RNA sequence: GGGAACGACUCGAGUAGAGUCGAAAACAUUACGAAUUCAGUCGCAAAUUGUAGAAUUAGCUACGCUACGAUUUAGUGAGCGUUAGUAACGUUGUAAUAUAAUAUAGUCUUUGGAAGGAUUAUAUUGGAGCCGCGGACAAGUUCGCUUGUCCGCGAAGACGUAGUACUGGUUCGCCAGUACUACGUCAAAAGAAACAACAACAACAAC
Reactivity to 2A3 in 0.01 (KOAc 150mM, MgCl2 10mM, bicine 150mM(pH8.5), 24C), signal-to-noise 2, nucleotides 027 to 156: c060a050u160u140a020c030g060a080a060u110u220c060a110g130u050c040g000c020a010a030a010u060u000g000u040a060g040a180a090u150u100a060g040c100u020a030c090g010c010u000a000c000g020a050u040u070u130a100g010u060g070a040g060c040g020u020u050a070g020u050a060a060c070g010u010u000g020u070a090a070u110a130u010a090a000u000a000u000a010g000u040c040u130u130u090g120g100a130a030g000g000a000u000u000a010u000a000u020u010g020g020a010g100c080c020g000c010g020g000a000c000a000a010g000u010u070c100g040c100u000u000g020u000c000c000g000c000g000a000a000

About this RNA:
The data come from the RNA Mapping Database (RMDB), library M2RFPK. Structure probing data (2A3) for a 207-nucleotide construct. The 2A3 profile rests on 883 reads. Values are in units of 0.01, from 0 to 300, in steps of 10.